[RMDB]
RNA sequence: GGGAACGACUCGAGUAGAGUCGAAAACAAUAUGGGGCAGAGGGCAACCGCCCUUGCUAAUGUUGGCAAUUCGGCUGGGACCACUGUAUCAUCGAUUACUAACGCCAGCAAUGGAACGAUUUACACAACAUACCUGCCACUUCGGUGGCAGGUAUGUAAAAGAAACAACAACAACAAC
Reactivity to DMS in 0.01 (KOAc 150mM, MgCl2 10mM, bicine 150mM(pH8.5), 24C), signal-to-noise 1, nucleotides 027 to 126: c100a060a140u000a040u000g000g000g000g000c000a110g000a000g020g000g030c030a150a180c230c260g000c020c020c000u010u020g000c020u000a150a100u000g010u000u000g010g000c120a020a100u000u000c010g030g000c040u000g000g010g010a160c070c100a060c090u000g080u000a070u000c000a040u010c070g040a040u000u000a070c060u020a070a180c150g060c030c020a040g020c050a080a230u040g020g000a070a150c100g000a070u000u000u000a040c110a060c230a120
Notes:
Source: RMDB library OK2TRN, as collected in RNAgym. This 177-nucleotide RNA was probed chemically with DMS. For DMS, 500 sequencing reads were counted.